Chemical mapping of a 177-nucleotide RNA with 2A3 and DMS. The data come from the RNA Mapping Database (RMDB), library TTRDEL. Values cover nucleotides 27 to 126. For DMS, 6,156 sequencing reads were counted. For 2A3, 6,771 sequencing reads were counted. High 2A3 reactivity points to a flexible backbone, as in loops and unpaired stretches.

RNA sequence: GGGAACGACUCGAGUAGAGUCGAAAAGAUAUGGAUAUAGGGAGAUCACAUUCGGAAACGAAUGAAAUGAUCGAGGAUCUAUGAUCCUAAGUCAAAAGCCGUAAGGCAGUUCGCUGCCUUACGGCAACUGUAUUGCAAAGUUCGCUUUGCAAUACAGAAAAGAAACAACAACAACAAC
Reactivity to 2A3 in 0.01 (KOAc 150mM, MgCl2 10mM, bicine 150mM(pH8.5), 24C), signal-to-noise 3, nucleotides 027 to 126: g020a010u070a020u170g000g000a000u000a010u010a040g010g010g010a030g000a010u000c000a010c000a040u010u010c010g020g000a070a060a050c020g020a000a020u040g040a100a210a090u090g000a000u010c010g010a080g000g000a000u010c020u030a020u090g170a010u040c010c000u050a150a040g030u040c030a020a030a150a140g000c000c020g020u010a000a000g000g000c010a000g010u030u060c250g000c150u000g000c000c010u000u000a000c010g000g010c000a000a000
Reactivity to DMS in 0.01 (KOAc 150mM, MgCl2 10mM, bicine 150mM(pH8.5), 24C), signal-to-noise 4, nucleotides 027 to 126: g000a050u000a300u000g000g000a010u000a020u000a010g000g000g010a050g010a010u000c000a100c010a020u000u000c000g010g010a090a080a190c000g010a010a010u000g000a070a110a130u010g010a010u000c010g010a060g000g000a020u010c000u000a010u010g000a020u000c010c000u000a060a120g000u000c040a080a060a120a170g000c000c000g020u000a000a000g000g000c000a010g030u010u010c260g010c010u000g000c000c000u000u000a010c000g000g010c010a000a000
Conditions: 150 mM KOAc, 10 mM MgCl2 and 150 mM bicine (pH 8.5), 24 C.